[RMDB]
Structure probing data (2A3) for a 207-nucleotide construct.
For 2A3, 692 sequencing reads were counted.
Reactivities are given for positions 27 through 156.
RNA sequence: GGGAACGACUCGAGUAGAGUCGAAAACUCUGUCUUAGCUCUACAAGUAGUAGGAAUCUGAGCUCUUCCAUCUGGGAUAGACUCUGACUCAGACUACCAGUACCUGUUACUCUGGGAGAAAAUACAGUACCAACCUCAGAAACAAGACAGCUCAGCACAUGAGCUAGGCUUUCGAGCCUAGCUCAUGAAAAGAAACAACAACAACAAC
Reactivity to 2A3 in 0.01 (KOAc 150mM, MgCl2 10mM, bicine 150mM(pH8.5), 24C), signal-to-noise 1, nucleotides 027 to 156: c010u000c000u010g010u020c010u080u100a010g010c000u000c010u080a070c020a060a070g030u030a010g000u010a000g080g000a020a040u000c030u020g000a000g010c080u010c000u020u010c010c010a300u180c300u300g150g000g000a040u070a090g050a020c010u040c000u090g010a070c000u000c040a000g030a040c030u020a010c000c020a000g020u040a090c040c030u020g030u020u030a060c010u000c020u070g030g000g090a030g030a090a060a080a050u200a050c110a050g110u030a050c010c080a050a060c000c020u040c000a030g000a030a080a000c040a070a000g070a040c020a010g000c030u060c040a020g040c040a000